[RMDB]
RNA sequence: GGGAACGACUCGAGUAGAGUCGAAAAGAUCUGGAGAAGAUCGAGGAUCUGCUGUGCGACUCGGAGCUGCGAUCCGACUGCGAGAAGAUCACCACGUGGCUGCUCAACUCCUCGGACAAGUGCGUGCGUCCCAAUUACGGUUCGCCGUAAUUGGGACAAAAGAAACAACAACAACAAC
Reactivity to 2A3 in 0.01 (KOAc 150mM, MgCl2 10mM, bicine 150mM(pH8.5), 24C), signal-to-noise 2, nucleotides 027 to 126: g010a030u040c040u070g050g060a230g100a150a070g040a030u020c030g000a110g000g030a040u000c010u110g020c030u070g090u000g110c020g100a080c050u020c060g060g010a020g000c080u100g090c080g080a080u000c000c000g020a020c030u050g010c070g050a080g020a040a040g010a060u050c030a020c070c000a040c080g040u110g030g010c050u050g000c000u010c020a040a090c010u070c030c020u020c040g050g000a020c020a060a040g080u060g070c020g020u040g000c040
Reactivity to DMS in 0.01 (KOAc 150mM, MgCl2 10mM, bicine 150mM(pH8.5), 24C), signal-to-noise 2, nucleotides 027 to 126: g000a020u000c010u000g000g010a170g010a150a030g000a020u000c000g010a200g000g010a040u010c010u000g030c010u010g000u010g000c010g000a110c160u010c030g000g020a130g040c060u000g030c110g000a110u000c010c020g010a050c080u000g020c020g010a090g030a130a090g000a040u000c040a110c050c020a100c110g020u010g010g020c060u000g000c040u000c060a100a130c090u010c020c030u000c050g000g000a050c050a060a060g000u020g000c040g030u000g040c260